An RNA of 207 nucleotides, treated with DMS and 2A3 and read out base by base. For DMS the reverse transcriptase was MarathonRT. The DMS profile rests on 2,036 reads. The RNA was probed in 150 mM KOAc, 10 mM MgCl2 and 150 mM bicine (pH 8.5) at 24 C. Reactivities are given for positions 27 through 156. 2A3 adducts were read by reverse transcription with SuperScript II with manganese.
[RMDB]
RNA sequence: GGGAACGACUCGAGUAGAGUCGAAAACAUCUGUUAACUUAUGAAAAUACACUUACAUCAAGAAAUGCCAGAAAAUUGCUCACUUCACGUGCUUAUGGGUAGAUUGAACCUAAUUUUGUGGCAUUAAAACCAAUUUUCUGCUGAGCAACAUGUCACAAUCAAUAGUACGGUUCGCCGUACUAUUGAUAAAAGAAACAACAACAACAAC
Reactivity to DMS in 0.01 (KOAc 150mM, MgCl2 10mM, bicine 150mM(pH8.5), 24C), signal-to-noise 1, nucleotides 027 to 156: c040a030u010c060u020g000u000u000a030a170c070u000u000a140u010g010a030a070a050a170u000a090c030a080c090u000u010a070c050a130u000c040a090a230g000a120a050a060u010g000c010c000a140g010a040a030a040a020u000u000g010c060u000c040a060c070u010u010c080a070c100g040u000g060c100u000u000a020u010g010g070g000u000a050g010a210u010u010g020a070a070c040c180u020a010a080u000u000u000u010g020u000g010g040c000a020u010u000a000a090a100a150c090c070a040a050u000u000u010u000c030u000g000c120u000g000a080g000c010a050a070c100a080u000g010u000c020a080c040a040
Reactivity to 2A3 in 0.01 (KOAc 150mM, MgCl2 10mM, bicine 150mM(pH8.5), 24C), signal-to-noise 4, nucleotides 027 to 156: c010a060u070c070u050g050u160u140a110a100c010u110u090a060u240g070a080a060a050a060u140a050c050a020c050u080u150a030c030a100u080c050a070a040g030a090a130a020u050g010c040c030a030g070a050a010a010a040u070u040g020c010u010c030a040c050u140u110c090a030c170g040u030g040c040u130u110a080u160g030g000g010u030a070g070a290u040u150g050a040a030c010c010u080a090a100u030u070u050u040g100u020g000g000c000a000u020u060a020a050a000a010c050c010a040a090u070u000u050u100c050u080g050c060u050g030a010g050c030a020a040c020a110u070g040u090c050a000c050a160